[RMDB]
RNA sequence: GGGAACGACUCGAGUAGAGUCGAAAAGAUAUGGAGCUAGAGGAGCGCGUAGUACAUCGGAAACGAUGUAUGAUCGAACUACGCUCCGAUUGGCUCCUAAGUCAAAAGCUAGGCUUCGGCCUAGCAAUCACUUUAAGUUGUUCGCAACUUAAAGUGAAAAAGAAACAACAACAACAAC
Reactivity to 2A3 in 0.01 (KOAc 150mM, MgCl2 10mM, bicine 150mM(pH8.5), 24C), signal-to-noise 4, nucleotides 027 to 126: g030a000u050a040u140g010g000a000g010c020u050a010g060a140g160g000a010g000c120g000c010g030u000a010g010u000a000c000a000u010c010g010g010a040a050a030c020g000a010u000g020u020a010u040g020a020u190c020g020a110a090c070u100a040c180g000c010u000c010c010g000a010u010u040g000g000c000u010c000c000u000a030a000g020u010c020a050a040a050a090g000c000u000a000g000g000c000u040u130c300g110g000c000c000u000a000g000c000a000a000
Reactivity to DMS in 0.01 (KOAc 150mM, MgCl2 10mM, bicine 150mM(pH8.5), 24C), signal-to-noise 9, nucleotides 027 to 126: g000a030u000a300u010g000g000a010g020c000u010a040g010a270g000g000a010g020c010g010c030g000u000a270g010u010a000c000a000u000c000g010g000a110a070a170c000g010a000u000g010u000a000u000g000a130u010c090g000a090a110c100u010a300c020g000c000u000c000c000g000a100u010u000g010g000c010u000c000c000u000a010a070g000u000c030a080a060a090a100g000c000u000a000g000g010c000u000u020c230g010g010c000c000u000a000g010c000a020a040